[RMDB]
RNA sequence: GGGAACGACUCGAGUAGAGUCGAAAACACAAUUCUCUAAGCGAUGAGAAGCGUGUGGAAAAUUAGGGAAGGGCUACGGCUAUAAUCAUAAGAAAGCUUAUCUACAAGCGGAGGUAUUCUCAGAACGAAAACCAUUUGGCGUUCGCGCCAAAUGGAACAUCCGAGGCAAGUUCGCUUGCCUCGGAUGAAAAGAAACAACAACAACAAC
Reactivity to 2A3 in 0.01 (KOAc 150mM, MgCl2 10mM, bicine 150mM(pH8.5), 24C), signal-to-noise 1, nucleotides 027 to 156: c020a000c020a060a070u000u000c000u030c010u050a240a220g060c020g100a080u170g050a060g050a000a000g000c060g020u000g000u150g010g050a030a110a020a070u110u080a100g030g000g000a010a030g010g000g000c020u010a030c060g010g020c000u030a080u050a180a040u140c150a040u060a150a080g050a250a060a000g000c010u050u090a050u260c050u140a130c070a110a040g000c010g020g000a010g040g060u090a100u040u000c030u010c030a010g050a140a030c060g010a080a030a030a060c000c000a000u000u000u000g010g010c010g000u000u010c050g010c000g000c030c050a000a000a000u010g000g000a000a000